The data come from the RNA Mapping Database (RMDB), library OK2TST.
Structure probing data (2A3 and DMS) for a 177-nucleotide construct.
For DMS, 2,279 sequencing reads were counted.
Reactivities are given for positions 27 through 126.
The reactions ran in a buffer of 150 mM KOAc, 10 mM MgCl2 and 150 mM bicine (pH 8.5), at 24 C.

[RMDB]
RNA sequence: GGGAACGACUCGAGUAGAGUCGAAAACAGCGCCGAGAUAUAACCCCAUGCUGGCUGUUUACAUGGCAGACCAAAUGGUGAGAGGAACGGGUUGAGCGUGACACCAUACGGUACACCGUACUGUGGCGACCAUACAGGAGUUCGCUCCUGUAUGGUCAAAAGAAACAACAACAACAAC
Reactivity to 2A3 in 0.01 (KOAc 150mM, MgCl2 10mM, bicine 150mM(pH8.5), 24C), signal-to-noise 3, nucleotides 027 to 126: c010a030g020c020g040c040c060g110a020g050a090u150a010u080a200a070c020c000c000c010a010u100g080c030u060g060g000c000u010g060u050u130u070a160c100a130u240g070g010c030a020g120a210c000c000a000a000a120u040g000g060u090g040a110g040a020g080g060a100a030c020g010g020g010u050u130g060a070g030c020g010u020g000a010c010a020c030c010a010u040a080c030g020g000u040a050c120a120c040c070g020u030a030c050u040g060u060g050g040c040
Reactivity to DMS in 0.01 (KOAc 150mM, MgCl2 10mM, bicine 150mM(pH8.5), 24C), signal-to-noise 3, nucleotides 027 to 126: c050a090g000c040g050c080c040g000a100g020a110u000a130u000a110a190c080c060c030c020a080u000g000c150u010g010g020c000u000g000u000u010u000a090c290a080u000g010g010c040a030g000a110c050c040a050a110a030u000g000g000u000g000a100g010a120g000g000a110a060c020g000g010g010u000u000g010a140g010c020g010u000g000a130c060a030c010c030a100u010a020c100g010g000u010a070c120a150c080c080g010u000a030c110u000g030u010g030g000c150